[RMDB]
RNA sequence: GGGAACGACUCGAGUAGAGUCGAAAAUGGCUAUGAGCCUUAACACCAUCUGCCUCAGCGCUCAAAACAGCACGACCACUUGGUUUACCCUUAAUAGUUUGGCCUCGCAUAUCAGGAAUAGUACCGGUAGGAUAUGCUAUAGCGAGCUUAGGAUAAGGUAAUACUCUGACUUCGGUCAGAGUAUUACAAAAGAAACAACAACAACAAC
Reactivity to 2A3 in 0.01 (KOAc 150mM, MgCl2 10mM, bicine 150mM(pH8.5), 24C), signal-to-noise 4, nucleotides 027 to 156: u090g040g000c070u100a110u290g060a050g030c000c000u040u070a030a020c030a010c070c000a040u020c040u060g020c010c010u050c040a020g010c010g040c040u050c070a060a130a050a070c030a000g030c030a010c030g040a010c010c010a040c060u070u100g070g040u060u070u140a140c010c010c000u060u090a140a050u040a120g080u000u060u070g100g000c000c020u010c020g000c000a010u030a030u030c030a020g000g080a120a100u090a060g070u080a120c040c000g070g050u070a070g000g070a040u020a020u030g000c000u040a040u050a070g020c020g000a000g000c000u010u030a040g030g050a060u060a140a060g080
Reactivity to DMS in 0.01 (KOAc 150mM, MgCl2 10mM, bicine 150mM(pH8.5), 24C), signal-to-noise 2, nucleotides 027 to 156: u000g010g030c020u000a130u000g040a100g010c000c020u000u000a050a090c100a140c040c020a050u000c020u000g000c000c000u000c030a080g050c010g000c070u000c030a100a070a120a170c100a050g020c010a090c060g050a090c000c010a080c080u010u000g010g020u010u000u010a110c050c000c010u040u000a100a110u000a060g050u000u000u010g020g020c000c000u010c300g030c000a070u000a030u000c030a150g030g010a080a150u000a090g000u000a120c040c000g040g000u010a070g010g010a120u000a010u020g020c000u000a110u000a050g020c030g010a080g020c040u010u010a070g010g000a150u000a040a100g000